[RMDB]
RNA sequence: GGGAACGACUCGAGUAGAGUCGAAAACUCUGAAGGCAUGAUCACCCCGUCAGAUGCGGAAGUUCGUGCUUCCGUCGAACGCGAAAGUCGGACGGCGGCCAUGAGUCGCAACGCAAAGCCGCGGCAAUAAGCUCGUCGUCGUUCGCGACGACGAGAACUCAUUGCUCCUGUUCGCAGGAGCAAUGAGAAAAGAAACAACAACAACAAC
Reactivity to 2A3 in 0.01 (KOAc 150mM, MgCl2 10mM, bicine 150mM(pH8.5), 24C), signal-to-noise 2, nucleotides 027 to 156: c010u050c020u080g060a160a030g030g010c000a030u040g020a020u070c010a050c000c020c010c000g010u060c070a050g010a230u200g000c010g000g040a000a030g010u150u190c150g110u300g020c000u050u000c020c010g020u020c010g040a090a010c020g020c030g110a200a020a050g100u200c010g020g010a040c030g030g010c040g010g010c020c010a060u050g020a040g040u050c010g000c000a020a100c030g040c070a000a230a000g020c060c040g020c040g040g000c000a010a110u100a090a060g030c010u010c000g000u010c010g010u030c000g000u060u060c130g010c000g090a000c000g000a000c000g000a000g000a000a010